[RMDB]
RNA sequence: GGGAACGACUCGAGUAGAGUCGAAAAGAUGUCGAAGCAAUGGCACAGUCCUAGGCAUCGUUCCAGCAUCCUAUGUCGAAGCAAUAGCACAGUCCUAGGCAUCGACGGUGUCGAAGCAAUGGCGUAGCGUUACAUGUGGGUUCGCCCACAUGUAACGAAAAGAAACAACAACAACAAC
Reactivity to 2A3 in 0.01 (KOAc 150mM, MgCl2 10mM, bicine 150mM(pH8.5), 24C), signal-to-noise 4, nucleotides 027 to 126: g030a020u040g010u020c040g060a030a020g020c060a040a150u300g040g020c060a060c100a300g090u170c010c000u010a010g000g000c010a030u020c030g000u030u000c010c000a010g030c010a070u070c010c010u070a060u090g020u040c030g030a070a010g030c010a040a180u050a100g030c010a020c010a060g020u000c030c040u090a060g120g010c050a080u040c040g010a020c000g040g000u030g010u060c010g020a060a010g040c020a010a050u140g010g000c040g040u030a020g030
Reactivity to DMS in 0.01 (KOAc 150mM, MgCl2 10mM, bicine 150mM(pH8.5), 24C), signal-to-noise 4, nucleotides 027 to 126: g010a010u000g010u000c010g000a190a130g010c090a080a050u030g000g000c010a120c150a110g000u010c020c010u000a160g010g010c020a020u000c010g000u020u000c020c010a140g020c160a070u020c150c020u010a040u000g020u000c020g000a080a140g020c020a050a110u000a080g010c020a050c040a050g000u000c010c030u000a070g010g000c070a040u000c090g010a030c040g010g010u000g010u000c040g020a070a150g000c020a060a130u010g010g000c040g020u000a030g010
This 177-nucleotide RNA was probed chemically with 2A3 and DMS. 2A3 adducts were read by reverse transcription with SuperScript II with manganese. The reactions ran in a buffer of 150 mM KOAc, 10 mM MgCl2 and 150 mM bicine (pH 8.5), at 24 C. DMS adducts were read by reverse transcription with MarathonRT. For DMS, 3,306 sequencing reads were counted. The 2A3 profile rests on 5,865 reads. It was measured as part of the RMDB library VIROID.